RNA sequence: GGGAACGACUCGAGUAGAGUCGAAAAACAAAUCAGGACGCUUAGAGUAUGGCCACAUGAAUGACUCAGCGCAGUAUGAAGUCUUUGUUUUCUUCCGAAAACAAGCUCAAUGAGAGCCAUCGGGGGUAGAUCUAUCUCAUGACGAGUGGUGGAAUACGAAGUAGCAUCUGUUCGCAGAUGCUACUUCAAAAGAAACAACAACAACAAC
Reactivity to 2A3 in 0.01 (KOAc 150mM, MgCl2 10mM, bicine 150mM(pH8.5), 24C), signal-to-noise 3, nucleotides 027 to 156: a000c060a000a080a030u110c030a050g110g030a070c060g010c030u080u150a030g000a050g090u100a050u090g040g000c030c020a080c010a080u180g100a150a060u120g030a030c010u020c070a020g020c030g000c020a010g050u070a070u120g100a110a020g020u030c030u060u080u050g020u020u030u030u000c010u100u040c050c070g040a000a030a040a020c010a010a010g000c000u000c040a060a090u150g020a030g000a000g090c020c000a020u030c060g010g000g000g000g010u040a020g000a050u000c010u050a060u020c040u020c010a050u070g080a040c040g010a010g030u060g000g020u050g010g000a060a020u100a110c100
Reactivity to DMS in 0.01 (KOAc 150mM, MgCl2 10mM, bicine 150mM(pH8.5), 24C), signal-to-noise 2, nucleotides 027 to 156: a100c040a080a090a080u000c050a140g020g010a070c020g010c000u000u000a120g000a090g040u010a060u000g020g010c010c010a060c080a130u010g000a100a060u000g010a060c010u000c060a080g020c040g030c060a100g000u020a090u010g010a040a080g030u000c070u010u000u000g030u000u000u000u000c010u010u020c230c110g010a010a010a020a020c040a040a040g000c040u000c020a080a110u020g010a080g000a090g000c010c040a040u000c050g010g010g010g010g040u010a070g000a100u000c060u000a050u000c020u000c030a090u010g000a140c060g010a180g010u000g000g030u020g010g000a070a060u000a110c140